[RMDB]
RNA sequence: GGGAACGACUCGAGUAGAGUCGAAAAUGUGAUGAGGAGACUCCAUGGGGGAGGGGGACACCACGUAGAUGGCCUGGGGGCACAUAUCUGAAUCUGUGUCAAGCCACAGACCCACAGAAAGUGCCCUUUAAUUUCCGAAAUCCUUUUUGCCCAUUUAAAAUAUUUAGGCAUUCGUGCCUAAAUAUUUAAAAGAAACAACAACAACAAC
Reactivity to DMS in 0.01 (KOAc 150mM, MgCl2 10mM, bicine 150mM(pH8.5), 24C), signal-to-noise 1, nucleotides 027 to 156: u020g040u010g000a100u010g000a300g020g000a130g000a120c010u000c030c040a090u010g010g000g060g020g020a130g000g020g030g020g000a110c040a090c010c010a090c110g000u010a120g010a080u000g030g020c040c060u020g020g010g040g030g000c030a030c010a030u000a270u010c020u010g020a060a130u000c010u040g000u060g010u000c210a190a090g060c040c010a020c010a030g000a060c000c020c300a090c010a010g010a030a150a230g020u010g000c000c000c000u000u010u000a030a050u000u010u020c000c000g000a130a070a050u000c030c010u000u000u000u000u000g030c000c020c020a300u000u000u000a040